[RMDB]
RNA sequence: GGGAACGACUCGAGUAGAGUCGAAAAGAAAGUCGUGCUCAACGGGUAAGUGGUGUAGAUGAAACAAAUUUACCAACAAUAUUUUUGUUGGAUUGUUUCACCUAUCGUUCCAUUUGCAGCUACGAAAGGGAUCGGUCUGGUUCGCCAGACCGAUCCCAAAAGAAACAACAACAACAAC
Reactivity to 2A3 in 0.01 (KOAc 150mM, MgCl2 10mM, bicine 150mM(pH8.5), 24C), signal-to-noise 1, nucleotides 027 to 126: g030a000a120a000g090u000c000g000u020g000c000u060c080a080a080c060g000g000g080u020a010a040g010u050g060g020u050g030u020a000g000a000u010g000a000a010a000c010a000a100a000u220u260u150a130c000c000a000a000c000a010a000u170a300u240u210u180u000u000g000u000u000g000g000a000u000u030g000u000u000u000c000a000c000c000u050a050u200c090g120u000u030c000c000a000u010u010u000g080c000a030g000c000u000a000c040g060a120a000a040